[RMDB]
RNA sequence: GGGAACGACUCGAGUAGAGUCGAAAACAGGUCAGCGCUGUGGCCGCCACCGUUUCUGAGUUCUGUGCUCAGGACUCAGAGCGCGCCGAGGCGUUCAGCGUUCACAGCAGCUCAGUCACUGCAGAGAAUAUAUUUACAUAUUCGUAUGUAAAUAUAUAAAAGAAACAACAACAACAAC
Reactivity to DMS in 0.01 (KOAc 150mM, MgCl2 10mM, bicine 150mM(pH8.5), 24C), signal-to-noise 9, nucleotides 027 to 126: c050a080g000g010u000c080a060g010c020g010c010u000g020u000g000g010c050c010g000c030c090a110c300c030g000u000u010u010c000u000g000a020g000u000u000c020u000g010u010g020c300u010c020a020g010g010a000c010u000c010a010g000a030g010c010g000c070g010c100c080g010a160g010g010c010g010u000u010c100a090g000c010g010u000u000c060a030c040a070g010c020a070g010c020u000c120a100g000u010c060a120c020u000g000c080a140g000a180g010a120
Reactivity to 2A3 in 0.01 (KOAc 150mM, MgCl2 10mM, bicine 150mM(pH8.5), 24C), signal-to-noise 5, nucleotides 027 to 126: c020a000g010g090u050c010a000g010c010g000c010u010g020u040g040g020c020c000g010c020c040a060c030c040g020u150u300u060c000u000g010a010g000u000u010c010u020g100u180g160c100u090c220a000g000g010a000c000u010c000a000g000a010g010c030g000c030g000c030c060g110a160g040g040c010g010u070u040c010a000g010c000g010u030u020c020a020c010a020g020c010a020g000c010u050c100a050g060u060c030a050c270u030g010c030a030g020a000g070a260